RNA sequence: GGGAACGACUCGAGUAGAGUCGAAAACUAUUACAGAUUGUUCAAUUGUAUGCCCCUUUCCUUUGAACGGAAUAUUAAAAGCUAUGUGCAGUAACUUUUAAUAGGCAUACCACUUUUGCAUCAAGCUCGCUAUGUGGUUGUUCGCAACCACAUAGCGAAAAGAAACAACAACAACAAC
Reactivity to 2A3 in 0.01 (KOAc 150mM, MgCl2 10mM, bicine 150mM(pH8.5), 24C), signal-to-noise 1, nucleotides 027 to 126: c000u060a010u140u230a110c210a080g230a180u120u160g060u070u090c000a000a050u030u030g000u010a000u000g020c010c000c010c070u000u000u010c030c000u130u030u160g090a080a040c130g100g000a000a000u040a020u000u000a000a000a000a000g010c040u030a000u120g050u050g020c010a000g040u000a050a050c000u020u000u000u000a000a000u000a010g020g000c010a000u060a000c000c000a150c120u140u090u070u070g020c000a010u000c020a030a060g030c030u050